[RMDB]
RNA sequence: GGGAACGACUCGAGUAGAGUCGAAAAGGUGGUCGUCAAUCCAUCAGUGAGAACCGUCAGAGAGGCCGGAAUUCUGACUACAGCAGCAGCAGUCACCCUAUGGGAGAAUGGUGCUAGUUCAGUGUGGCUGCUUUAAUGCGUUCGCGCAUUAAAGCAGAAAAGAAACAACAACAACAAC
Reactivity to 2A3 in 0.01 (KOAc 150mM, MgCl2 10mM, bicine 150mM(pH8.5), 24C), signal-to-noise 3, nucleotides 027 to 126: g050g000u010g010g010u070c090g050u020c030a020a100u080c010c010a060u050c020a000g050u000g080a070g020a060a070c000c000g000u030c010a010g040a020g000a020g250g060c010c060g050g010a010a050u090u000c000u040g080a080c010u080a050c020a030g010c030a000g010c000a000g080c000a020g040u020c020a060c020c070c000u090a160u260g010g030g040a050g030a060a040u030g070g010u020g040c010u020a020g050u070u090c060a020g000u040g000u010g190g000
Reactivity to DMS in 0.01 (KOAc 150mM, MgCl2 10mM, bicine 150mM(pH8.5), 24C), signal-to-noise 3, nucleotides 027 to 126: g020g080u000g000g000u010c050g000u020c110a130a140u020c020c020a070u020c120a060g020u000g030a140g010a040a030c090c070g020u010c000a030g010a080g010a060g050g060c000c000g000g000a100a080u000u030c030u000g000a060c020u030a070c160a130g000c130a060g030c020a100g000c070a020g000u000c000a070c000c010c080u050a100u030g010g030g000a070g000a040a080u000g000g000u000g010c020u000a020g020u000u000c080a070g010u010g010u020g000g010
The data come from the RNA Mapping Database (RMDB), library OK1LIB. Structure probing data (2A3 and DMS) for a 177-nucleotide construct. The 2A3 profile rests on 1,556 reads. The DMS profile rests on 3,638 reads. Conditions: 150 mM KOAc, 10 mM MgCl2 and 150 mM bicine (pH 8.5), 24 C.